[RMDB]
RNA sequence: GGGAACGACUCGAGUAGAGUCGAAAAGUGUUUCACAGACCUUCCGUAGCCAGUCCCACCUGCCCUGCUCUCUGCUGCAUGCGCAGGGGCCUCCUGUCAGCUCCUCAGAGACCCUUAUUAUCCCAGGGCUCGCCAUGCACUGCCUCCUUCGCCUGGAUAAUACUACUCGAUUCGUCGAGUAGUAUUAAAAAGAAACAACAACAACAAC
Reactivity to DMS in 0.01 (KOAc 150mM, MgCl2 10mM, bicine 150mM(pH8.5), 24C), signal-to-noise 2, nucleotides 027 to 156: g010u000g020u000u000u000c030a170c080a170g010a060c010c020u000u010c030c040g030u000a150g030c030c020a150g030u000c020c000c010a110c060c020u000g020c020c010c030u010g020c030u000c050u010c030u000g000c050u000g010c010a070u000g000c030g040c030a140g060g040g010g000c050c040u000c050c020u000g020u000c050a140g010c020u010c010c020u000c030a080g010a140g020a080c010c010c020u000u000a120u000u010a150u010c030c020c040a150g000g010g020c010u000c030g020c030c010a080u010g000c010a090c050u000g000c020c000u000c020c030u000u000c060g030c040c020u000g010g010a300
Reactivity to 2A3 in 0.01 (KOAc 150mM, MgCl2 10mM, bicine 150mM(pH8.5), 24C), signal-to-noise 4, nucleotides 027 to 156: g040u040g040u020u100u070c060a070c040a060g050a110c020c000u030u050c020c020g040u040a020g010c010c050a020g030u040c020c000c000a050c010c030u030g010c000c020c010u020g000c010u030c000u020c030u070g070c030u030g030c020a060u050g010c030g020c110a010g000g000g000g030c000c010u080c000c020u070g070u090c010a020g030c000u020c010c000u080c030a040g020a170g040a300c010c010c000u080u080a160u110u090a050u130c020c030c020a010g000g010g000c010u010c020g020c020c010a020u060g000c020a010c040u030g010c000c010u010c010c010u070u070c020g030c030c020u030g000g020a040
The record gives the reactivity of an RNA of 207 nucleotides to DMS and 2A3.
2A3 adducts were read by reverse transcription with SuperScript II with manganese.
The DMS profile rests on 7,733 reads.
Values cover nucleotides 27 to 156.
It was measured as part of the RMDB library OK3TST.
For 2A3, 3,272 sequencing reads were counted.
DMS (dimethyl sulfate) methylates the pairing face of unpaired adenines and cytosines.
Values are in units of 0.01, from 0 to 300, in steps of 10.
The reactions ran in a buffer of 150 mM KOAc, 10 mM MgCl2 and 150 mM bicine (pH 8.5), at 24 C.